[RMDB]
Background
Conditions: 150 mM KOAc, 10 mM MgCl2 and 150 mM bicine (pH 8.5), 24 C. Structure probing data (2A3 and DMS) for a 177-nucleotide construct. As a SHAPE reagent, 2A3 marks flexible, mostly unpaired nucleotides at the ribose 2'-OH. 2A3 adducts were read by reverse transcription with SuperScript II with manganese.

RNA sequence: GGGAACGACUCGAGUAGAGUCGAAAAGAUAUGGAGAUCCAUCAGGCUGGAACUACAGCCUGUAGUCGGAAACGACUACUGGCUGCCAGCUGGAUCUCCUAAGUCAAAAUCGGACUUCGGUCCGAAAGAUGAAUAUAGGGUUCGCCCUAUAUUCAUCAAAAGAAACAACAACAACAAC
Reactivity to 2A3 in 0.01 (KOAc 150mM, MgCl2 10mM, bicine 150mM(pH8.5), 24C), signal-to-noise 5, nucleotides 027 to 126: g020a010u080a050u180g000g010a010g010a000u010c020c010a100u160c130a100g250g000c010u020g010g040a110a130c180u250a100c300a000g010c010c000u000g000u000a000g000u010c000g010g030a050a090a070c010g000a000c000u000a000c000u010g000g010c010u020g010c000c000a000g000c020u020g000g000a000u000c000u000c000c000u000a040a010g000u010c000a010a000a040a300u050c010g000g010a000c000u060u080c300g090g010u010c000c000g000a040a010a000
Reactivity to DMS in 0.01 (KOAc 150mM, MgCl2 10mM, bicine 150mM(pH8.5), 24C), signal-to-noise 6, nucleotides 027 to 126: g000a040u010a300u000g000g000a030g010a010u000c010c000a290u010c290a190g010g000c000u010g000g000a130a030c080u030a300c000a010g010c000c000u000g000u000a010g010u010c000g010g010a130a080a260c010g000a010c000u000a010c000u000g010g000c000u000g000c010c010a000g010c010u000g010g010a020u000c000u000c000c000u000a010a060g000u000c040a090a060a130a170u000c000g000g000a020c000u000u020c220g010g010u000c010c000g000a010a040a100